[RMDB]
RNA sequence: GGGAACGACUCGAGUAGAGUCGAAAACUGCUCGUGAUGGCGUAAGGCGAGGCGAUAACUUCCAUAGUGUCUUAACAACAUUCAUUGACGCAGCACGAGGCCCCGCAGGUGUGGAGUCUGAUGUUGAAUAGGUCACGGUUCGCCGUGACCAAAAGAAACAACAACAACAAC
Reactivity to 2A3 in 0.01 (KOAc 150mM, MgCl2 10mM, bicine 150mM(pH8.5), 24C), signal-to-noise 3, nucleotides 027 to 129: c010u040g010c000u000c000g050u000g000a060u020g080g060c060g020u070a060a030g020g000c010g020a010g000g030c050g030a050u080a120a030c080u070u050c060c000a030u040a100g110u080g000u060c000u030u080a070a050c060a060a010c010a080u000u110c020a030u020u250g030a000c030g000c000a030g040c020a010c020g030a000g000g060c000c000c000c000g050c000a020g050g080u010g030u020g030g030a010g000u000c040u040g060a020u000g010u000u000g020a020a000u020a070
Reactivity to DMS in 0.01 (KOAc 150mM, MgCl2 10mM, bicine 150mM(pH8.5), 24C), signal-to-noise 3, nucleotides 027 to 129: c000u060g000c080u030c050g030u000g020a000u080g000g000c050g000u000a000a000g030g030c200g040a010g010g030c090g040a030u030a120a210c060u030u020c140c040a190u070a090g060u030g020u010c030u010u070a090a110c230a090a080c050a070u010u060c090a080u040u040g060a020c070g050c200a230g030c060a090c030g020a050g060g000c000c030c010c080g040c000a090g050g010u050g000u000g000g020a200g010u000c060u030g000a100u020g030u010u000g010a050a090u020a070